[RMDB]
The record gives the reactivity of an RNA of 177 nucleotides to DMS.
RNA sequence: GGGAACGACUCGAGUAGAGUCGAAAAUUUUGAGGGUAGUGAAAAUCAAAAGUUCCUCAUACCGGAUUGUCCGCUUGAUGUACAGUUGAAGAAAGGUAUUGAGGAGACUCAUCUUGGCACGCCACAGAGAUUAUAGACUCUUCGGAGUCUAUAAUCUAAAAGAAACAACAACAACAAC
Reactivity to DMS in 0.01 (KOAc 150mM, MgCl2 10mM, bicine 150mM(pH8.5), 24C), signal-to-noise 2, nucleotides 027 to 126: u000u000u000u020g000a090g000g020g000u010a040g000u000g000a080a060a070a070u000c040a040a050a100a050g010u020u000c000c010u000c010a030u000a020c020c020g000g020a170u010u030g000u000c000c060g000c100u010u000g030a110u010g010u000a040c090a030g010u000u010g040a070a060g000a070a150a120g000g000u000a000u000u010g020a020g020g020a060g010a020c020u000c090a100u000c070u000u010g010g000c010a030c040g020c020c040a030c210a070g010
Annotation
For DMS the reverse transcriptase was MarathonRT. The RNA was probed in 150 mM KOAc, 10 mM MgCl2 and 150 mM bicine (pH 8.5) at 24 C. Values cover nucleotides 27 to 126.